Conditions: 150 mM KOAc, 10 mM MgCl2 and 150 mM bicine (pH 8.5), 24 C.
The record gives the reactivity of an RNA of 177 nucleotides to DMS and 2A3.
The 2A3 profile rests on 4,159 reads.
It was measured as part of the RMDB library TTRDEL.
2A3 adducts were read by reverse transcription with SuperScript II with manganese.
RNA sequence: GGGAACGACUCGAGUAGAGUCGAAAAGAUAUGGACUUCCUACCCACCGUUCAGGAACGACGAAGUCGGAAACGACAGAGUUCGCAGACGAGGGAAGUCCUAAGUCAAAUCCUGGUUCGCCAGGAAAUCAAUAACUUGUCUUCGGACAAGUUAUUGAAAAAGAAACAACAACAACAAC
Reactivity to DMS in 0.01 (KOAc 150mM, MgCl2 10mM, bicine 150mM(pH8.5), 24C), signal-to-noise 5, nucleotides 027 to 126: g010a110u020a130u000g010g000a040c000u000u010c000c000u000a140c040c020c020a300c100c000g000u000u020c030a300g000g000a020a030c020g000a150c170g010a180a140g000u000c000g020g010a080a060a120c000g000a010c010a020g020a300g000u000u000c000g000c030a300g000a010c020g010a120g000g000g000a020a020g010u000c000c000u000a000a080g010u000c100a080a120a090u000c000c000u010g010g010u010u020c180g020c030c000a020g010g000a020a040a040
Reactivity to 2A3 in 0.01 (KOAc 150mM, MgCl2 10mM, bicine 150mM(pH8.5), 24C), signal-to-noise 2, nucleotides 027 to 126: g080a080u230a200u290g000g000a000c000u000u030c020c020u110a300c050c010c000a050c020c000g030u080u070c040a070g080g030a050a020c010g300a050c080g040a140a040g000u000c000g030g010a070a090a030c010g000a000c000a020g040a000g000u030u000c030g000c040a020g000a010c000g010a020g000g000g000a000a010g000u000c000c000u000a040a000g040u040c040a120a020a150u050c010c000u010g000g050u100u080c240g030c060c000a000g000g000a060a010a010